RNA sequence: GGGAACGACUCGAGUAGAGUCGAAAAGGGCCACCGAUAGCCUCCGGGUGCGCACCGAUGAGAUCUAGCGAGGAGACCAUGAUCAGGCGACGAGGCGCCCGUAUGGCCGCGCUGCUGGCGGCGGCCGUCUCAGUCUUUCAUUCGUGAAAGACUGAGAAAAAGAAACAACAACAACAAC
Reactivity to 2A3 in 0.01 (KOAc 150mM, MgCl2 10mM, bicine 150mM(pH8.5), 24C), signal-to-noise 5, nucleotides 027 to 126: g010g020g020c030c020a040c030c030g080a090u100a070g030c000c000u020c040c020g050g020g020u070g040c110g000c040a070c020c020g020a040u120g080a050g000a040u020c020u050a020g040c020g030a050g030g040a030g040a040c040c030a080u100g020a080u100c050a030g060g000c030g020a060c030g030a060g010g070c020g010c000c000c000g090u130a130u170g020g000c010c000g000c000g000c020u110g030c040u150g100g020c020g040g000c000g000g000c000c000g020
Reactivity to DMS in 0.01 (KOAc 150mM, MgCl2 10mM, bicine 150mM(pH8.5), 24C), signal-to-noise 4, nucleotides 027 to 126: g010g000g010c020c010a070c030c060g000a120u020a100g000c010c000u010c070c010g020g010g010u000g010c100g030c090a120c010c020g010a110u000g000a130g000a090u000c020u000a060g010c040g010a080g000g000a090g000a060c060c100a040u010g010a070u010c050a110g020g020c050g020a090c080g040a100g000g000c100g000c000c000c020g020u070a040u010g010g010c000c000g040c010g010c030u010g000c130u040g000g030c000g020g020c030g010g010c000c010g020